[RMDB]
RNA sequence: GGGAACGACUCGAGUAGAGUCGAAAAUCAAAUACUCAAACUUCACAUCAGAAGAGAAGACGCACGCAGCGAGCGAGAGAGAGACUCACUCACCCAACCCAGGGAAGGGACCACCAGGAGGAAAAAAUCCAAGUAGUAACUUCGGUUACUACUUGGAAAAAGAAACAACAACAACAAC
Reactivity to DMS in 0.01 (KOAc 150mM, MgCl2 10mM, bicine 150mM(pH8.5), 24C), signal-to-noise 1, nucleotides 027 to 126: u000c080a020a100a060u000a060c020u000c060a070a120a140c070u000u000c020a050c070a060u000c090a150g000a060a080g000a120g010a050a030g000a060c080g030c050a020c070g010c060a040g000c070g000a080g010c010g030a050g000a010g000a080g010a110g010a030c040u000c010a130c030u000c030a100c030c000c020a060a150c040c030c030a070g010g010g030a030a170g000g010g000a100c080c050a040c090c070a100g000g010a020g000g000a010a000a040a040a010a120